RNA sequence: GGGAACGACUCGAGUAGAGUCGAAAAAUAUGAAUCUAUGUGGACAGCUGAAGAUCUUUAAAGCACCUAGAUUAGUUCUUCUCAUGCAAAGGGCAAAAUGCCAAGACUUAUGUGUUCUUGGGCUGGAGUAUCUGUCUGCAUUCGUGCAGACAGAUACAAAAGAAACAACAACAACAAC
Reactivity to DMS in 0.01 (KOAc 150mM, MgCl2 10mM, bicine 150mM(pH8.5), 24C), signal-to-noise 2, nucleotides 027 to 126: a020u010a090u030g010a070a030u000c030u010a040u000g020u000g010g000a110c200a120g010c080u000g020a090a110g020a070u010c060u000u010u000a060a140a110g000c050a050c030c040u000a010g010a090u000u010a120g010u000u000c060u000u000c000u000c060a140u010g010c120a030a080a080g020g000g020c130a060a020a040a080u000g020c020c010a040a010g000a040c000u000u010a080u000g030u010g000u000u000c010u000u000g010g020g010c040u020g000g020a300
Reactivity to 2A3 in 0.01 (KOAc 150mM, MgCl2 10mM, bicine 150mM(pH8.5), 24C), signal-to-noise 1, nucleotides 027 to 126: a000u230a060u140g040a000a040u110c040u040a040u120g080u060g080g000a030c040a050g030c010u040g030a080a040g030a180u040c000u100u140u090a080a130a020g010c010a060c000c000u000a020g000a130u030u000a000g000u000u080c000u060u000c000u000c010a010u040g020c010a100a000a000g000g070g000c020a090a070a010a040u150g060c000c040a010a000g000a010c030u210u190a160u300g200u050g040u110u010c000u000u000g000g010g030c010u010g030g020a020

An RNA of 177 nucleotides, treated with DMS and 2A3 and read out base by base.
The 2A3 profile rests on 1,014 reads.